The record gives the reactivity of an RNA of 177 nucleotides to 2A3 and DMS. Source: RMDB library OK1LIB, as collected in RNAgym. For DMS the reverse transcriptase was MarathonRT. Conditions: 150 mM KOAc, 10 mM MgCl2 and 150 mM bicine (pH 8.5), 24 C.
[RMDB]
RNA sequence: GGGAACGACUCGAGUAGAGUCGAAAACUCUUCACUUAUGUUAGGUUUGAUUCUGAGUAUACCAUACUGGCCACUGCAUCUCAACCUGAUUCAGCAAACUAUUCAAGCAAUUUGGUGGUCCAAGCCAACGACUAUAAAGGUUCGCCUUUAUAGUCGUAAAAGAAACAACAACAACAAC
Reactivity to 2A3 in 0.01 (KOAc 150mM, MgCl2 10mM, bicine 150mM(pH8.5), 24C), signal-to-noise 9, nucleotides 027 to 126: c020u020c000u160u150c070a090c080u160u170a110u280g070u040u120a070g060g040u040u040u110g080a120u130u050c030u060g020a020g030u050a040u030a140c020c040a020u050a120c050u040g030g000c020c010a010c010u030g000c010a050u020c030u010c030a030a070c000c000u030g010a070u090u080c020a010g020c030a040a060a080c020u110a110u220u170c050a100a030g010c010a080a100u040u040u070g050g010u030g000g010u020c020c020a050a020g020c010c000a030
Reactivity to DMS in 0.01 (KOAc 150mM, MgCl2 10mM, bicine 150mM(pH8.5), 24C), signal-to-noise 5, nucleotides 027 to 126: c020u000c040u040u020c050a080c150u010u010a070u030g010u000u020a050g020g000u010u010u010g000a070u010u010c020u000g000a110g000u000a040u000a120c090c060a050u010a060c060u000g040g000c060c060a100c010u000g000c080a030u000c040u000c070a060a070c080c040u000g000a060u010u010c110a070g000c110a040a080a040c100u010a100u010u020c110a050a070g020c090a020a050u020u020u010g000g030u000g000g000u000c050c060a100a150g000c040c040a060